[RMDB]
The record gives the reactivity of an RNA of 170 nucleotides to DMS and 2A3. As a SHAPE reagent, 2A3 marks flexible, mostly unpaired nucleotides at the ribose 2'-OH. The DMS profile rests on 14,277 reads. Values cover nucleotides 27 to 129.
RNA sequence: GGGAACGACUCGAGUAGAGUCGAAAACUUGUCUUUUCUUAUUAUUCCUCGGACGUUUCCCAGCCAGGGGUUAUCCUCCUCAAGUCUCUUGAUAGUCUUGUUGACCUUCCGGAGGUCCCUCUCGAGCCCAUCGGUUCGUUCGCGAACCGAAAAAGAAACAACAACAACAAC
Reactivity to DMS in 0.01 (KOAc 150mM, MgCl2 10mM, bicine 150mM(pH8.5), 24C), signal-to-noise 3, nucleotides 027 to 129: c170u020u020g010u030c000u040u000u030u010c030u000u000a110u050u050a160u040u030c070c040u010c000g020g030a080c070g000u030u010u010c020c000c010a070g040c060c030a100g060g010g030g040u000u020a040u020c020c020u010c010c020u030c060a120a140g020u020c040u010c010u000u000g000a060u010a030g020u020c020u010u060g030u000u050g000a120c000c090u020u040c070c070g020g000a000g000g000u010c040c020c010u010c040u040c030g010a090g040c010c020c020a090
Reactivity to 2A3 in 0.01 (KOAc 150mM, MgCl2 10mM, bicine 150mM(pH8.5), 24C), signal-to-noise 5, nucleotides 027 to 129: c010u040u120g100u130c060u030u050u050u000c030u050u130a220u160u050a100u150u110c010c000u020c020g030g000a010c010g010u020u080u010c000c020c000a000g030c050c000a050g030g020g000g010u000u100a100u060c000c000u010c000c000u020c010a060a100g140u000c030u010c000u000u030g000a010u030a010g000u000c000u010u060g030u050u080g030a000c000c000u090u060c050c050g100g000a000g000g010u010c000c000c000u000c000u020c020g020a020g000c000c020c000a050